The data come from the RNA Mapping Database (RMDB), library OK2TST. The record gives the reactivity of an RNA of 177 nucleotides to DMS. DMS adducts were read by reverse transcription with MarathonRT. The DMS profile rests on 1,438 reads. The RNA was probed in 150 mM KOAc, 10 mM MgCl2 and 150 mM bicine (pH 8.5) at 24 C.

[RMDB]
RNA sequence: GGGAACGACUCGAGUAGAGUCGAAAAGCUGACGUGCCCACCUCUGCGUUCUUCGACUACCCCUGCCCAGUAGGGCCGCCGCCCUGUGCUCGCUGGAGCCACGCGCAUGCAGCCGUCGGUGACCGCCCGUGUUGUAAGCCUUCGGGCUUACAACACGAAAAGAAACAACAACAACAAC
Reactivity to DMS in 0.01 (KOAc 150mM, MgCl2 10mM, bicine 150mM(pH8.5), 24C), signal-to-noise 1, nucleotides 027 to 126: g000c020u010g000a060c050g020u020g010c010c050c080a220c050c050u000c040u000g000c060g000u000u000c050u020u000c050g000a080c070u000a170c080c020c040c030u010g010c010c020c000a120g000u020a070g020g010g020c000c060g020c090c080g010c040c030c020u010g000u010g010c010u010c040g000c090u010g020g000a170g010c000c050a060c140g010c070g020c020a090u000g010c180a130g010c010c020g000u010c030g000g020u000g000a130c080c070g010c060c050